[RMDB]
RNA sequence: GGGAACGACUCGAGUAGAGUCGAAAAAACACAGUUAUCUGUCCUGUGAUGUUAGCAGUCCUGUGGCUGAGAAAGCCUGCCUUACACCAGACAGGUAGAUGGUGGAUCCAGGAAAGGCAGCGGGAGUGCUAAUCCUAGGUCUGCUGGAGAGUCAGCCCCACUACUCACGGUUCGCCGUGAGUAGUGGAAAAGAAACAACAACAACAAC
Reactivity to 2A3 in 0.01 (KOAc 150mM, MgCl2 10mM, bicine 150mM(pH8.5), 24C), signal-to-noise 2, nucleotides 027 to 156: a000a000c060a040c040a050g030u150u120a120u120c020u040g030u090c020c020u010g030u020g050a120u090g030u090u040a030g040c010a060g120u000c000c040u050g030u110g130g010c000u000g020a060g130a250a070a020g030c000c000u010g000c010c000u070u060a070c030a000c010c000a010g180a150c020a010g050g060u070a020g070a130u130g000g000u010g040g020a020u030c050c040a030g040g010a050a130a000g030g000c010a020g060c040g020g030g000a050g040u000g000c000u000a000a030u050c000c000u010a020g020g010u000c000u000g010c000u040g060g060a110g030a000g130u050c010a020g000c000c000
An RNA of 207 nucleotides, treated with 2A3 and read out base by base. Reactivities are given for positions 27 through 156. Source: RMDB library OK3TST, as collected in RNAgym. Conditions: 150 mM KOAc, 10 mM MgCl2 and 150 mM bicine (pH 8.5), 24 C.